[RMDB]
RNA sequence: GGGAACGACUCGAGUAGAGUCGAAAAUAAUAAUAGUUAAAUAGACUGAGCAUUUACUACGUGUCAGGGACUGUUCUAAGCACUUGAUAUGCAUUAACUUGUUCAAGCUUCACAACAGUGCUAAGACAGACACUAUUCGCUCCAUUUUGGAAAGGAGAACUGUCUUGGAGUUCGCUCCAAGACAGUUAAAAGAAACAACAACAACAAC
Reactivity to 2A3 in 0.01 (KOAc 150mM, MgCl2 10mM, bicine 150mM(pH8.5), 24C), signal-to-noise 1, nucleotides 027 to 156: u040a000a100u120a060a020u050a060g000u010u050a070a170a280u120a260g040a020c020u010g010a040g070c000a070u200u130u100a060c100u010a040c060g000u000g010u030c020a000g030g000g050a080c000u060g000u090u100c010u020a050a050g010c050a080c020u010u000g000a040u050a040u230g000c000a000u040u030a250a150c240u080u170g040u100u040c010a010a000g070c010u080u030c110a060c020a050a020c000a020g010u000g020c000u040a060a040g040a010c020a010g050a000c010a000c050u060a070u060u020c080g000c000u000c000c000a020u020u040u140u180g120g030a160a060a000g010g000a010g000
Structure probing data (2A3) for a 207-nucleotide construct. The data come from the RNA Mapping Database (RMDB), library OK3TST. Conditions: 150 mM KOAc, 10 mM MgCl2 and 150 mM bicine (pH 8.5), 24 C.